An RNA of 207 nucleotides, treated with 2A3 and read out base by base. The RNA was probed in 150 mM KOAc, 10 mM MgCl2 and 150 mM bicine (pH 8.5) at 24 C.
RNA sequence: GGGAACGACUCGAGUAGAGUCGAAAAAAUCCUCAGAAGAAUAGGCUUGUUGUUUUACAGUGUUAGUGAUCCAUUCCCUUUGACGAUCCCUAGGUGGAGAUGGGGCAUGAGGAUCCUCCAGGGGAAAAGCUCACUACCACUGGGCAACAACCCUAAAUCAGUUAUGAUGCUUCGGCAUCAUAACUGAAAAAGAAACAACAACAACAAC
Reactivity to 2A3 in 0.01 (KOAc 150mM, MgCl2 10mM, bicine 150mM(pH8.5), 24C), signal-to-noise 1, nucleotides 027 to 156: a000a010u090c050c010u160c070a100g070a200a020g070a150a150u030a040g020g010c020u010u000g020u010u000g010u000u050u040u180a020c010a010g000u020g010u010u000a010g000u010g000a030u030c060c030a090u000u020c000c000c000u000u030u000g020a030c020g000a000u010c010c000c020u120a210g130g070u130g120g230a240g020a170u210g040g040g040g020c030a040u110g060a120g100g000a000u000c020c000u010c000c020a030g000g030g000g000a030a000a000a020g000c010u000c000a000c010u000a010c030c000a000c000u000g000g000g000c000a000a030c000a000a010c010c020c000u030a100a100a030
Background: For 2A3 the reverse transcriptase was SuperScript II with manganese.